[RMDB]
An RNA of 177 nucleotides, treated with DMS and 2A3 and read out base by base. DMS adducts were read by reverse transcription with MarathonRT. The DMS profile rests on 1,237 reads. Reactivities are given for positions 27 through 126. For 2A3 the reverse transcriptase was SuperScript II with manganese.
RNA sequence: GGGAACGACUCGAGUAGAGUCGAAAAGAUAUGGAAUGUUCGCUCUUUUGACGAAAUAUCGGAAACGAUAUCUCGAUAAGAGCGACAUUCCUAAGUCAAAAGCGUUGGGGCUUCGGCCCCAACGCAACCGAACAGAAUAGUUCGCUAUUCUGUUCGGAAAAGAAACAACAACAACAAC
Reactivity to DMS in 0.01 (KOAc 150mM, MgCl2 10mM, bicine 150mM(pH8.5), 24C), signal-to-noise 1, nucleotides 027 to 126: g020a030u000a300u010g000g010a000a000u000g010u010u000c010g040c000u000c000u000u000u020u030g010a240c100g000a020a010a000u000a000u000c030g010g010a080a040a110c000g000a010u000a010u000c030u000c000g010a100u000a060a070g000a020g000c000g000a000c010a000u000u000c000c000u000a000a090g010u010c020a070a090a080a110g020c010g050u000u010g010g000g030g020c000u000u010c210g030g010c020c000c000c000a000a000c000g040c010a000a030
Reactivity to 2A3 in 0.01 (KOAc 150mM, MgCl2 10mM, bicine 150mM(pH8.5), 24C), signal-to-noise 2, nucleotides 027 to 126: g000a020u010a010u060g000g010a040a020u030g110u280u200c010g040c070u010c030u010u300u140u300g130a030c020g000a010a030a000u000a010u000c000g010g000a010a020a020c000g000a000u000a010u000c010u000c010g070a090u070a300a180g020a000g020c000g000a000c000a000u000u000c010c000u000a010a020g010u000c010a060a010a110a000g030c020g000u000u010g000g060g000g000c040u120u130c300g090g000c030c120c000c000a010a010c000g020c000a000a000